RNA sequence: GGGAACGACUCGAGUAGAGUCGAAAAAAUGAAGACGUUAAAGGAAAAUGGGCAGUUUUUUGUUUCUACCCAGCAGACUUUUCAUUUGUUUGCCCAACUGAACUCGGUGACCUUCAAGAGCAAUACGAAACACUGAAAUCUCUUGGUGUAGAAGUUAUCCAUCAAAAUAUUUCGAUAUUUUGAUGGAAAAAGAAACAACAACAACAAC
Reactivity to 2A3 in 0.01 (KOAc 150mM, MgCl2 10mM, bicine 150mM(pH8.5), 24C), signal-to-noise 2, nucleotides 027 to 156: a000a010u070g020a030a000g050a020c070g030u150u120a120a120a050g100g030a120a180a030a130u060g010g020g020c030a040g030u010u020u040u020u110u020g050u020u040u000c010u010a040c010c010c020a020g010c070a020g040a080c030u000u060u040u100c140a070u010u040u090g060u090u150u080g040c000c020c020a020a010c050u060g020a040a000c010u000c060g000g060u050g020a010c010c010u020u060c040a010a010g020a010g010c030a010a030u050a090c040g070a050a080a000c010a000c040u050g040a030a090a200u070c020u000c010u030u010g070g020u040g010u030a050g020a040a010g300u300u300a040
Reactivity to DMS in 0.01 (KOAc 150mM, MgCl2 10mM, bicine 150mM(pH8.5), 24C), signal-to-noise 1, nucleotides 027 to 156: a050a010u000g000a040a080g000a070c070g030u000u010a100a090a140g020g000a100a100a100a050u000g020g040g030c000a030g020u000u000u000u000u010u000g020u000u000u000c000u010a040c000c040c020a140g000c080a130g000a030c050u000u000u000u010c060a100u000u010u010g040u000u010u010g000c000c020c010a010a130c080u000g040a050a020c080u000c060g050g030u000g000a050c040c030u000u000c030a050a170g000a050g000c060a030a070u010a150c040g010a140a060a060c080a110c020u020g010a030a030a120u000c040u000c040u000u000g010g020u000g010u010a060g000a060a270g010u040u010a090
Source: RMDB library OK3TST, as collected in RNAgym.
The record gives the reactivity of an RNA of 207 nucleotides to 2A3 and DMS.
The 2A3 profile rests on 717 reads.
The RNA was probed in 150 mM KOAc, 10 mM MgCl2 and 150 mM bicine (pH 8.5) at 24 C.